[RMDB]
An RNA of 207 nucleotides, treated with 2A3 and read out base by base.
For 2A3, 910 sequencing reads were counted.
Reactivities are given for positions 27 through 156.
For 2A3 the reverse transcriptase was SuperScript II with manganese.
RNA sequence: GGGAACGACUCGAGUAGAGUCGAAAACGCUGGGAAGUGCUAAUCUGGUCGCAUAUUGUCAGCGAGGACCUGAAGCGCGCACGGGUCUCGCUUGGAUUUAUAUGCGACCAGACAACACUUCCUGUGCUGAAGCGCGCACGGCAACCGAAAGGUGCGACUUAUGCCUCACCUUCGGGUGAGGCAUAAGAAAAGAAACAACAACAACAAC
Reactivity to 2A3 in 0.01 (KOAc 150mM, MgCl2 10mM, bicine 150mM(pH8.5), 24C), signal-to-noise 2, nucleotides 027 to 156: c020g000c010u040g000g000g020a030a000g030u010g020c110u200a290a160u030c000u000g000g000u000c000g000c010a000u020a010u140u300g030u050c000a000g000c000g000a000g000g140a270c000c000u020g030a180a010g020c040g000c010g020c100a040c020g010g000g000u010c030u020c000g010c040u010u210g050g050a030u100u200u200a190u090a000u020g060c010g000a000c010c000a010g000a000c010a000a000c000a000c000u000u000c000c000u000g050u030g010c000u060g030a210a060g000c010g020c000g040c000a020c010g090g000c040a120a060c020c010g020a050a010a050g080g000u010g000c020g000a000